RNA sequence: GGGAACGACUCGAGUAGAGUCGAAAAUUUGAUGCGCCUAAAUACACCGGCAUAUAUUAACCUAGGAUAUCGCUGUUCUAUUGCCUCAAUCGACAACGUCAUGAUGUCAUGUUGUAGUGGCCAACCACCACCAUGUAAAUUACUCAUAGUAUUUAGACGUUGCCGAUAUGUUCGCAUAUCGGCAACGAAAAGAAACAACAACAACAAC
Reactivity to 2A3 in 0.01 (KOAc 150mM, MgCl2 10mM, bicine 150mM(pH8.5), 24C), signal-to-noise 1, nucleotides 027 to 156: u030u010u150g000a040u090g000c110g070c070c000u040a000a120a000u100a040c050a000c010c010g040g010c010a020u060a000u090a020u090u250a090a080c040c040u040a050g000g090a070u100a000u090c020g000c070u000g050u040u070c010u050a010u050u190g040c060c010u090c000a050a120u010c110g010a000c000a090a060c020g060u000c000a100u300g040a000u140g240u240c020a020u010g050u000u010g010u100a060g000u000g030g000c020c000a100a170c020c000a000c000c010a010c000c000a000u070g000u010a060a060a060u160u220a090c070u000c010a010u010a150g060u010a120u160u220u030a110g010a020
Chemical mapping of a 207-nucleotide RNA with 2A3.